Conditions: 150 mM KOAc, 10 mM MgCl2 and 150 mM bicine (pH 8.5), 24 C. Chemical mapping of a 177-nucleotide RNA with 2A3. For 2A3, 597 sequencing reads were counted.
RNA sequence: GGGAACGACUCGAGUAGAGUCGAAAAGGCACGGCGCUCCUCUUCGGUCUGUGGCCGCACACGGCAGAGGUGCUGACGCGCACUGCCGAGGCCGCGCUCAACUUCGGCGCCGUCCGUGAGCACCUCGGACGACUGCCGGUUUCGACCGGCAGUCGUCAAAAGAAACAACAACAACAAC
Reactivity to 2A3 in 0.01 (KOAc 150mM, MgCl2 10mM, bicine 150mM(pH8.5), 24C), signal-to-noise 2, nucleotides 027 to 126: g030g000c200a000c030g010g000c000g020c010u040c000c040u130c040u000u100c030g060g120u040c130u220g010u040g000g040c000c010g060c010a100c000a020c020g080g010c040a000g010a060g200g100u100g040c050u230g170a070c250g020c000g000c000a000c000u000g000c000c000g010a010g000g000c000c010g040c080g010c000u140c060a130a160c070u280u240c050g000g000c000g000c000c010g000u000c000c010g040u110g010a080g010c070a120c020c010u070c050g000
As a SHAPE reagent, 2A3 marks flexible, mostly unpaired nucleotides at the ribose 2'-OH.